[RMDB]
The record gives the reactivity of an RNA of 177 nucleotides to DMS and 2A3.
Values cover nucleotides 27 to 126.
Conditions: 150 mM KOAc, 10 mM MgCl2 and 150 mM bicine (pH 8.5), 24 C.
RNA sequence: GGGAACGACUCGAGUAGAGUCGAAAAUCUUGGCGAUGUAUGGGAUCAGCGGCAGGUUCAGGAUCAGCAGAAUCAGGUUGCCCAGAUACAUCGAAAUGAUGACUGCCCAAAAGAUCUGCGGAUCGUCCCUGUUGCUAUGGUUCGCCAUAGCAACAGGAAAAGAAACAACAACAACAAC
Reactivity to DMS in 0.01 (KOAc 150mM, MgCl2 10mM, bicine 150mM(pH8.5), 24C), signal-to-noise 2, nucleotides 027 to 126: u000c010u040u010g010g010c030g000a000u000g030u000a040u020g000g000g000a060u040c130a150g000c100g020g020c020a060g000g010u000u000c050a020g000g030a300u020c110a100g020c100a030g000a010a020u000c000a130g000g010u000u000g000c080c060c020a040g010a100u020a060c040a030u010c000g000a060a090a060u000g000a030u000g010a080c070u010g000c020c040c010a070a070a100a080g010a010u000c040u000g030c110g010g000a030u000c010g020u000c040
Reactivity to 2A3 in 0.01 (KOAc 150mM, MgCl2 10mM, bicine 150mM(pH8.5), 24C), signal-to-noise 5, nucleotides 027 to 126: u020c010u010u060g080g060c010g000a010u010g030u030a070u030g010g020g050a060u250c050a000g050c020g100g060c100a070g020g010u040u020c030a030g170g090a180u090c050a040g130c050a030g020a030a010u010c010a010g130g050u040u020g000c000c000c000a070g040a080u080a020c000a000u000c000g030a050a040a050u110g000a000u000g010a020c110u090g000c000c000c000a050a110a010a000g020a010u000c000u020g070c140g150g010a000u000c000g100u090c030
It was measured as part of the RMDB libraries RFM100 and RFMREP.
For 2A3 the reverse transcriptase was SuperScript II with manganese.